[RMDB]
RNA sequence: GGGAACGACUCGAGUAGAGUCGAAAAACAUCAGGAAGUUAGCGAAAACUUUGGCUCCCUCCUUUGCCUUAGCAUUAAAAGGGAUAGCGACAAAGUGUGUAUUACCUAAUGUACCUUUGGCGUGUACAAUCCACAGCCAAUUCGUUGGCUGUGGAUUAAAAGAAACAACAACAACAAC
Reactivity to 2A3 in 0.01 (KOAc 150mM, MgCl2 10mM, bicine 150mM(pH8.5), 24C), signal-to-noise 1, nucleotides 027 to 126: a000c020a100u080c020a000g150g000a000a030g070u020u030a030g050c030g150a050a110a050a090c010u020u020u050g040g030c000u020c010c000c000u010c000c020u060u040u100g010c000c060u100u150a080g010c020a050u000u290a120a100a030a080g040g000g000a050u090a080g010c010g040a050c010a010a000a000g140u160g000u040g010u110a040u060u040a140c030c050u130a050a050u030g050u090a030c010c000u000u000u040g020g020c020g000u090g050u090a050c020
Reactivity to DMS in 0.01 (KOAc 150mM, MgCl2 10mM, bicine 150mM(pH8.5), 24C), signal-to-noise 2, nucleotides 027 to 126: a080c070a090u000c040a080g010g010a090a120g000u000u000a090g010c100g000a070a040a200a070c020u000u000u010g000g010c030u010c030c020c000u010c040c090u000u000u000g000c020c140u020u010a090g020c040a020u010u020a020a090a090a040g000g010g020a060u010a110g000c020g000a040c000a010a010a010g000u000g030u000g010u000a030u020u010a170c280c130u010a040a010u010g000u010a090c040c010u000u000u000g000g000c100g000u000g000u000a090c170